Structure probing data (2A3 and DMS) for a 177-nucleotide construct.
Values cover nucleotides 27 to 126.
For 2A3, 2,154 sequencing reads were counted.
The data come from the RNA Mapping Database (RMDB), library RFMREP.
Reactivities are rounded to 0.1 and cut off at 0 and 3.
The DMS profile rests on 2,241 reads.
For DMS the reverse transcriptase was MarathonRT.

[RMDB]
RNA sequence: GGGAACGACUCGAGUAGAGUCGAAAACCUUCCUCACACUGCCUCCCGCUGCGUGAAACCUCGCUGUUUUCUUGGCUAACUUUCAGCGAGGUGAGGCAAGGCGGCAAAAAAAAGUUGGGAGCAGCAAGUAGUAGUAAAGCUUCGGCUUUACUACUACAAAAGAAACAACAACAACAAC
Reactivity to 2A3 in 0.01 (KOAc 150mM, MgCl2 10mM, bicine 150mM(pH8.5), 24C), signal-to-noise 1, nucleotides 027 to 126: c000c000u020u040c010c000u050c000a070c000a000c020u090g000c010c010u000c010c000c010g000c010u000g000c020g090u110g050a120a000a010c000c000u000c010g000c020u000g050u010u050u050u000c090u100u120g170g000c030u030a030a030c030u050u060u050c010a000g000c000g010a000g000g000u000g000a010g020g010c050a010a010g030g000c040g000g000c030a100a020a020a000a000a040a020a060g090u100u090g030g020g000a070g060c050a010g000c050a290a000
Reactivity to DMS in 0.01 (KOAc 150mM, MgCl2 10mM, bicine 150mM(pH8.5), 24C), signal-to-noise 2, nucleotides 027 to 126: c010c020u010u000c030c010u000c080a120c180a180c200u020g000c050c010u000c030c020c030g010c030u000g000c190g000u000g010a100a160a010c010c000u000c000g000c010u000g000u000u000u000u000c030u000u010g020g000c040u000a040a020c080u000u000u000c020a010g000c030g010a000g020g010u000g000a050g010g030c030a090a200g030g010c020g000g060c180a000a000a000a020a020a010a030a040g000u010u000g020g030g000a050g010c070a050g000c140a090a130